[RMDB]
RNA sequence: GGGAACGACUCGAGUAGAGUCGAAAAGUGAGCCGCUGCACCUGGCCAGGCCUUCCAGCUUUCUCACCCACACACAGACCUGCCUAGGCACAGGUGCAUGCCUCUGGCCUGGUCUAUGCCUCAGCACCCUCUGAGAUCAGUUCGCUGAUCUCAGAGGAAAAGAAACAACAACAACAAC
Reactivity to 2A3 in 0.01 (KOAc 150mM, MgCl2 10mM, bicine 150mM(pH8.5), 24C), signal-to-noise 1, nucleotides 027 to 126: g070u020g000a020g040c000c030g070c010u030g000c000a020c010c020u010g020g000c000c000a000g000g000c000c010u060u030c020c020a070g030c020u050u100u000c040u020c040a070c020c060c020a050c000a000c000a000c010a090g090a170c020c020u050g000c020c020u090a200g010g040c040a080c010a300g010g010u020g020c000a010u070g000c000c000u060c030u010g070g000c000c030u000g000g030u020c020u030a070u080g070c000c030u060c030a010g030c010a110c010
Reactivity to DMS in 0.01 (KOAc 150mM, MgCl2 10mM, bicine 150mM(pH8.5), 24C), signal-to-noise 2, nucleotides 027 to 126: g040u000g000a100g020c020c090g000c040u000g020c070a030c010c020u000g000g020c050c030a060g020g020c020c220u000u000c040c040a090g020c070u000u000u000c050u000c080a180c010c000c030a060c170a080c160a080c140a090g010a030c090c060u010g030c040c040u000a140g010g010c000a030c030a040g000g020u000g010c000a060u000g010c030c030u000c070u000g010g020c010c030u000g010g000u000c060u000a130u000g010c050c030u020c040a060g000c080a130c130